An RNA of 207 nucleotides, treated with DMS and 2A3 and read out base by base. The reactions ran in a buffer of 150 mM KOAc, 10 mM MgCl2 and 150 mM bicine (pH 8.5), at 24 C.
RNA sequence: GGGAACGACUCGAGUAGAGUCGAAAAUAUGUUAAACUCUCUAUAACACGUGGAGUGCAACCAGGGAAAUUAAAUCCCGACCCAACUGUUGACCCAACCGUUGUUGUCCAAACGAGCCCACUGCCGCGUGGUGGAGUCAACAGCAACCCAGUAUGGGGCACUAAGAGUAAUUCGUUACUCUUAGUGCAAAAGAAACAACAACAACAAC
Reactivity to DMS in 0.01 (KOAc 150mM, MgCl2 10mM, bicine 150mM(pH8.5), 24C), signal-to-noise 1, nucleotides 027 to 156: u000a090u030g010u000u010a070a030a140c030u010c020u010c040u000a180u000a100a140c060a050c080g030u000g000g010a170g000u010g000c060a090a130c150c130a100g010g010g000a020a070a140u000u000a080a120a160u010c000c010c000g000a060c000c010c010a070a050c000u000g000u000u000g020a040c000c000c030a050a080c110c090g000u010u000g000u010u000g010u000c020c030a050a080a110c030g000a160g010c040c050c140a050c150u000g000c030c010g000c060g030u000g020g010u040g020g000a090g000u000c000a000a010c000a010g000c040a070a090c000c000c010a140g050u000a070u010g000g040g000
Reactivity to 2A3 in 0.01 (KOAc 150mM, MgCl2 10mM, bicine 150mM(pH8.5), 24C), signal-to-noise 2, nucleotides 027 to 156: u160a050u090g040u060u080a070a070a020c010u000c010u000c030u080a060u090a300a140c120a030c180g020u130g020g010a040g020u020g030c060a030a090c030c110a060g000g010g050a030a110a110u180u170a030a180a100u060c000c000c030g010a040c010c000c010a010a060c010u010g010u060u010g030a010c020c020c030a070a060c150c110g000u050u020g030u000u020g020u040c040c070a110a040a010c030g030a050g040c010c060c030a060c090u140g030c040c030g090c020g030u010g010g000u030g000g030a110g020u020c000a000a010c000a000g020c000a000a050c000c000c000a020g070u210a220u300g040g040g000

Source: RMDB library OK3TST, as collected in RNAgym.